[RMDB]
This 207-nucleotide RNA was probed chemically with DMS and 2A3.
DMS adducts were read by reverse transcription with MarathonRT.
2A3 adducts were read by reverse transcription with SuperScript II with manganese.
For 2A3, 2,818 sequencing reads were counted.
For DMS, 2,200 sequencing reads were counted.
The reactions ran in a buffer of 150 mM KOAc, 10 mM MgCl2 and 150 mM bicine (pH 8.5), at 24 C.
The data come from the RNA Mapping Database (RMDB), library M2RFPK.

RNA sequence: GGGAACGACUCGAGUAGAGUCGAAAACGGUUACGCCUUCUUUACCGUUAUCAAGGAAGGUACUCGGCCAAGCUAAGGGAAGCAUUAUUCCUUAGGCGCAUGUCGCCGCCAGCAUGGUGUGAGGGGAAAAAGUAUGCUGGGUUCGCCCAGCAUACAACUAAACUUGACACUUCGGUGUCAAGUUUAGAAAAGAAACAACAACAACAAC
Reactivity to DMS in 0.01 (KOAc 150mM, MgCl2 10mM, bicine 150mM(pH8.5), 24C), signal-to-noise 1, nucleotides 027 to 156: c010g000g010u000u000a030c020g020c020c000u010u000c000u000u000u020a010c000c010g000u000u010a020u000c140a010a000g000g070a050a010g000g010u000a020c060u000c000g010g020c030c070a040a150g020c010u000a110a120g040g000g010a040a040g010c100a110u010u000a170u010u000c000c000u000u000a160g000g020c010g020c070a060u090g020u020c120g010c000c010g020c050c050a050g020c030a070u010g010g040u000g000u000g000a130g000g000g000g000a060a020a070a090a170g010u000a000u000g010c020u000g010g040g050u000u020c300g010c010c030c000a000g030c000a000u030a010c000a020a120
Reactivity to 2A3 in 0.01 (KOAc 150mM, MgCl2 10mM, bicine 150mM(pH8.5), 24C), signal-to-noise 4, nucleotides 027 to 156: c000g010g010u060u040a050c070g020c010c000u000u020c030u000u080u040a030c030c020g200u130u140a080u090c060a000a000g030g000a000a000g000g000u030a030c010u000c010g020g000c010c010a030a000g000c020u040a050a080g020g000g020a020a010g050c050a200u060u140a130u150u180c010c010u000u150a060g010g000c000g000c030a140u200g130u280c040g000c030c010g000c030c050a030g010c020a010u030g000g040u070g060u120g070a030g010g010g000g070a040a080a050a050a000g000u000a000u000g000c010u000g020g000g040u010u050c170g090c010c000c000a000g000c000a000u000a000c000a000a000